Record summary
This 177-nucleotide RNA was probed chemically with 2A3 and DMS. For DMS the reverse transcriptase was MarathonRT. The RNA was probed in 150 mM KOAc, 10 mM MgCl2 and 150 mM bicine (pH 8.5) at 24 C. Source: RMDB library RFM100, as collected in RNAgym.
RNA sequence: GGGAACGACUCGAGUAGAGUCGAAAAGAAAGAAAGAAAGAUCCUGAACCGGGGCGAGAGCAGGGCGCCCCGGUUCCGGCAAGACAUACACCGUGCCACGGAAUUUGUGUGCACAUAUGGGCGUUAAGUGGUUUGUAAAUUUCGAUUUACAAACCACAAAAGAAACAACAACAACAAC
Reactivity to 2A3 in 0.01 (KOAc 150mM, MgCl2 10mM, bicine 150mM(pH8.5), 24C), signal-to-noise 2, nucleotides 027 to 126: g080a000a040a000g090a050a080a010g040a040a150a010g050a100u120c000c010u010g000a020a000c000c000g000g010g000g000c010g030a010g020a010g140c100a090g030g120g010c000g000c000c000c000c000g020g000u000u000c020c000g000g010c000a010a010g090a010c000a000u100a050c030a040c050c050g000u010g000c000c020a010c010g060g170a170a210u130u300u130g010u020g060u070g000c040a000c020a000u080a100u030g030g010g000c040g000u010u000a100a190
Reactivity to DMS in 0.01 (KOAc 150mM, MgCl2 10mM, bicine 150mM(pH8.5), 24C), signal-to-noise 1, nucleotides 027 to 126: g020a040a040a000g010a060a080a060g000a090a050a080g020a120u000c000c010u010g000a020a010c010c010g000g040g000g070c000g030a040g010a120g000c050a030g040g020g000c020g000c030c000c000c040g060g020u000u000c010c000g040g110c280a070a090g000a140c110a090u040a050c070a160c070c090g000u000g000c010c020a000c000g020g010a130a170u000u050u030g020u000g000u010g000c020a000c020a060u030a080u000g000g000g040c020g020u010u010a020a090